[RMDB]
The data come from the RNA Mapping Database (RMDB), library OK3TST. Chemical mapping of a 207-nucleotide RNA with 2A3. For 2A3 the reverse transcriptase was SuperScript II with manganese.

RNA sequence: GGGAACGACUCGAGUAGAGUCGAAAAAAGGCUGUUACUGAUGAGCGAGAUCAACUUAAGACGCAAGUUGCGACGUUAACCGGUCAAUUAAGCGCUCGAGAUGCCAAAAUAGUAGAUUUAACGUCGCAAUUAGCUACUUGUAAUACCGACUUAUCGGGUCACCUAGAGUUUUCGAACUCUAGGUGACAAAAGAAACAACAACAACAAC
Reactivity to 2A3 in 0.01 (KOAc 150mM, MgCl2 10mM, bicine 150mM(pH8.5), 24C), signal-to-noise 2, nucleotides 027 to 156: a010a000g090g000c040u060g080u100u110a020c010u000g040a020u020g020a020g010c040g020a050g020a140u080c090a050a060c000u060u120a040a030g060a050c090g000c010a060a020g000u000u000g000c010g000a000c020g000u000u050a030a040c040c020g030g020u060c060a000a030u050u050a180a000g070c040g070c070u040c030g080a100g020a150u110g030c030c020a000a060a060a060u130a000g160u060a040g020a210u060u040u010a000a010c020g000u000c000g020c000a000a020u020u010a020g000c010u040a040c020u020u080g020u060a030a060u070a160c150c000g080a100c220u070u120a030u150c000g050g000
The reactions ran in a buffer of 150 mM KOAc, 10 mM MgCl2 and 150 mM bicine (pH 8.5), at 24 C. Reactivities are rounded to 0.1 and cut off at 0 and 3.